Chemical mapping of a 177-nucleotide RNA with DMS. The RNA was probed in 150 mM KOAc, 10 mM MgCl2 and 150 mM bicine (pH 8.5) at 24 C.
RNA sequence: GGGAACGACUCGAGUAGAGUCGAAAAGCGUUGAUUUUCUCUGCCGCGGUGACAAACUGAGCAUGCGCGGACUGAAAUGCUGCGGAGCUCUCCCCCUGGUGAAACGCCUGAGCCGAGAUCGCCUCAAGUCCUGGUCAUUAUUCGUAAUGACCAGGACAAAAGAAACAACAACAACAAC
Reactivity to DMS in 0.01 (KOAc 150mM, MgCl2 10mM, bicine 150mM(pH8.5), 24C), signal-to-noise 1, nucleotides 027 to 126: g010c080g040u000u000g000a160u000u040u020u020c010u000c020u010g020c020c040g020c110g020g000u010g020a070c130a060a060a080c190u020g000a070g000c010a020u010g040c040g000c030g000g020a050c050u000g020a070a100a040u000g020c020u000g000c020g030g010a160g010c060u010c010u000c020c010c010c020c030u020g010g030u020g000a000a140a070c070g010c000c010u000g000a150g040c060c030g000a100g010a050u010c030g010c010c010u010c060a090a120
Annotation
Reactivities are given for positions 27 through 126.